[RMDB]
RNA sequence: GGGAACGACUCGAGUAGAGUCGAAAAGAAAGAAAGUUGUCAGGUGGUGAUUGUCUAUUUUUCCUUAAAUGAUGAUGCCGAGGGGAGGCGGUCUGCGCAAUGCCGUUUUCCCGCCAUUCUUGCAAAAAUCUUCUAGUAGAUUCGUCUACUAGAAGAUAAAAGAAACAACAACAACAAC
Reactivity to 2A3 in 0.01 (KOAc 150mM, MgCl2 10mM, bicine 150mM(pH8.5), 24C), signal-to-noise 6, nucleotides 027 to 126: g100a010a090a010g060a030a090a020g030u060u050g020u060c050a030g030g040u030g030g030u070g120a070u050u030g030u010c030u040a090u060u060u000u060u080c030c000u090u120a080a110a060u150g030a030u020g010a020u060g030c040c040g030a100g000g020g000g000a010g020g000c010g020g000u040c040u080g070c070g010c100a060a090u120g010c010c000g010u000u010u040u010c000c000c000g000c000c000a030u070u030c020u030u070g040c040a030a050a040a020
Reactivity to DMS in 0.01 (KOAc 150mM, MgCl2 10mM, bicine 150mM(pH8.5), 24C), signal-to-noise 8, nucleotides 027 to 126: g010a080a080a070g010a080a090a080g010u000u000g000u000c070a110g010g020u010g010g020u000g010a050u010u010g000u000c040u010a050u000u010u000u000u010c020c020u000u010a060a070a130u010g000a060u010g010a050u000g010c080c090g010a120g020g000g000g000a030g000g000c020g000g000u010c250u000g010c140g020c140a100a060u010g010c020c000g000u000u000u000u000c010c010c010g010c080c070a090u000u000c030u000u000g010c150a030a050a070a080
Source information:
Structure probing data (2A3 and DMS) for a 177-nucleotide construct. Values cover nucleotides 27 to 126. DMS adducts were read by reverse transcription with MarathonRT. The data come from the RNA Mapping Database (RMDB), libraries RFM100 and RFMREP.